[RMDB]
RNA sequence: GGGAACGACUCGAGUAGAGUCGAAAACCUUCCCUUUUCUGAUUAUUCCGACGAUGUUCCCCAGCCAGGGAUUUUCUUCCUCGAGUUUCUUGAUGGUCUUCCUGGUCUUCCGGAGAUCUUUCUCGAGUUACUGAACGGUUCGCCGUUCAGAAAAGAAACAACAACAACAAC
Reactivity to DMS in 0.01 (KOAc 150mM, MgCl2 10mM, bicine 150mM(pH8.5), 24C), signal-to-noise 5, nucleotides 027 to 129: c000c000u000u000c050c020c000u020u020u010u040c030u040g000a070u020u040a060u030u020c040c040g000a100c070g030a000u000g030u030u020c060c020c000c030a080g000c040c090a120g040g030g020a060u030u020u030u030c060u040u030c100c020u010c000g000a110g040u060u030u020c070u030u030g020a120u040g050g000u030c000u030u040c020c030u070g030g020u000c090u060u060c010c000g000g000a090g000a030u000c040u000u000u000c030u020c020g040a000g020u030u050a140
Reactivity to 2A3 in 0.01 (KOAc 150mM, MgCl2 10mM, bicine 150mM(pH8.5), 24C), signal-to-noise 8, nucleotides 027 to 129: c000c000u020u040c000c000c000u030u030u030u030c040u030g050a060u030u130a060u130u030c020c010g040a050c040g040a090u170g040u040u030c000c000c000c000a010g040c010c010a020g020g010g010a020u070u040u020u000c010u060u060c000c010u010c010g040a040g040u040u100u030c050u080u090g080a110u130g020g010u000c010u090u060c020c030u050g010g050u070c050u210u020c040c010g010g000a010g000a010u010c000u010u070u010c020u000c010g020a030g010u010u040a050